Chemical mapping of a 207-nucleotide RNA with DMS and 2A3.
The RNA was probed in 150 mM KOAc, 10 mM MgCl2 and 150 mM bicine (pH 8.5) at 24 C.
Values are in units of 0.01, from 0 to 300, in steps of 10.
For 2A3, 3,295 sequencing reads were counted.
For DMS the reverse transcriptase was MarathonRT.
It was measured as part of the RMDB library RNAMAK.
[RMDB]
RNA sequence: GGGAACGACUCGAGUAGAGUCGAAAAUUGCAUUCGUGCAAAAUUUAUCCUAAGUCGAGUACGAUGAGGGAGCUUGUCAGAUUAAAUGUCGGAAACGACAUGAUCUUGGAUUUAGCUCCCGAGUACUCGAUAUGGACCAAAGUGAAUUCGUUCACAACUUACUAUGACGGUUCGCCGUCAUAGUAAGAAAAGAAACAACAACAACAAC
Reactivity to DMS in 0.01 (KOAc 150mM, MgCl2 10mM, bicine 150mM(pH8.5), 24C), signal-to-noise 2, nucleotides 027 to 156: u000u000g000c010a130u000u000c230g030u000g010c050a020a040a050a180u000u000u000a110u040c000c000u020a080a260g020u000c000g020a060g000u000a020c000g000a260u000g000a230g040g000g020a010g030c000u000u000g000u000c010a130g000a040u000u010a050a110a080u000g000u000c000g040g000a210a120a270c000g020a010c000a030u000g000a010u000c010u010u010g020g010a060u000u000u000a030g040c010u000c000c000c010g000a010g000u010a000c030u000c000g000a030u000a090u000g010g000a040c060c050a030a080a110g030u000g010a040a100u000u010c210g030u000u010c000a030c040a130a290
Reactivity to 2A3 in 0.01 (KOAc 150mM, MgCl2 10mM, bicine 150mM(pH8.5), 24C), signal-to-noise 5, nucleotides 027 to 156: u050u010g000c000a020u050u090c220g110u090g000c020a000a050a060a060u230u280u160a090u040c010c000u020a130a020g020u000c000g010a010g000u010a000c040g060a300u150g060a200g000g010g000a000g010c010u010u010g010u000c010a020g000a010u060u020a270a260a100u040g000u000c010g050g020a100a100a090c010g000a000c010a000u010g000a010u000c030u060u160g190g010a060u250u270u140a000g010c000u010c000c000c000g010a000g000u000a000c000u000c000g000a000u000a000u020g010g000a010c050c050a120a100a080g010u020g010a020a060u160u100c180g110u130u030c040a010c020a050a060